RNA sequence: GGGAACGACUCGAGUAGAGUCGAAAAUCCUCCUACAAAGGCGUGUCUGUGGUUCCCUGUCUUUGGACACGUAAGAAUUGGAGGAAAAUAAAUGUGGAUUUGGGAAACUUUGAGGCCAGCUUGCUUCUAUACACUGGAUAUUCGUAUCCAGUGUAUAAAAAGAAACAACAACAACAAC
Reactivity to DMS in 0.01 (KOAc 150mM, MgCl2 10mM, bicine 150mM(pH8.5), 24C), signal-to-noise 9, nucleotides 027 to 126: u000c000c000u000c000c000u000a070c120a070a170a130g000g000c010g010u000g010u000c010u000g030u020g020g010u000u000c010c010c010u010g010u010c090u010u010u020g010g000a020c000a010c010g010u010a040a070g010a150a110u010u000g010g010a020g000g000a020a030a070a080u010a040a070a080u010g010u010g010g000a100u010u000u000g000g000g000a090a080a090c080u000u010u010g000a070g000g010c020c080a080g000c090u010u010g000c040u000u000c070
Reactivity to 2A3 in 0.01 (KOAc 150mM, MgCl2 10mM, bicine 150mM(pH8.5), 24C), signal-to-noise 9, nucleotides 027 to 126: u000c000c000u000c010c000u050a080c070a070a120a010g150g010c010g000u010g000u000c020u030g130u100g130g010u060u050c010c010c010u050g090u060c080u090u140u170g010g000a000c000a000c000g020u050a060a060g100a090a090u080u050g000g000a000g010g000a030a020a030a000u090a020a050a030u130g030u060g030g050a080u050u050u100g030g000g000a050a050a040c030u050u030u100g030a040g020g020c000c020a020g030c080u040u080g010c000u050u010c010